Chemical mapping of a 177-nucleotide RNA with 2A3 and DMS. Reactivities are given for positions 27 through 126. The DMS profile rests on 1,417 reads. For DMS the reverse transcriptase was MarathonRT. The reactions ran in a buffer of 150 mM KOAc, 10 mM MgCl2 and 150 mM bicine (pH 8.5), at 24 C.
RNA sequence: GGGAACGACUCGAGUAGAGUCGAAAAUCUGAAGAGUACCCAUUCGCAUGUACGAUCAAAACUAGGUACUCGGUAGGUGGAGCCACCACCAACACCGCCGAACAUGCGAGACCACACACAAGCACAGCGACUAGGACCUAUUCGUAGGUCCUAGUCGAAAAGAAACAACAACAACAAC
Reactivity to 2A3 in 0.01 (KOAc 150mM, MgCl2 10mM, bicine 150mM(pH8.5), 24C), signal-to-noise 3, nucleotides 027 to 126: u050c040u070g100a100a020g000a020g060u040a040c000c030c000a120u050u040c020g000c020a030u030g020u090a070c070g080a090u160c080a030a120a060a110c080u090a070g000g040u030a050c020u000c030g010g010u050a080g000g000u010g020g020a060g030c060c040a040c020c000a000c000c000a070a020c050a020c050c010g000c000c020g010a020a030c000a010u050g000c030g000a000g020a010c030c020a020c000a010c010a010c020a100a060g060c000a030c040a040g030
Reactivity to DMS in 0.01 (KOAc 150mM, MgCl2 10mM, bicine 150mM(pH8.5), 24C), signal-to-noise 2, nucleotides 027 to 126: u070c060u020g000a020a090g000a040g020u010a040c000c000c300a240u000u000c010g020c010a090u000g010u010a140c060g000a240u010c180a050a050a070a030c260u000a050g000g000u040a000c030u000c000g000g000u000a030g000g070u020g000g020a300g000c180c120a150c000c000a020c090c000a180a110c020a030c100c000g040c140c040g000a120a000c000a040u000g000c000g000a030g000a230c050c000a020c040a060c110a000c050a020a000g050c100a010c150a000g020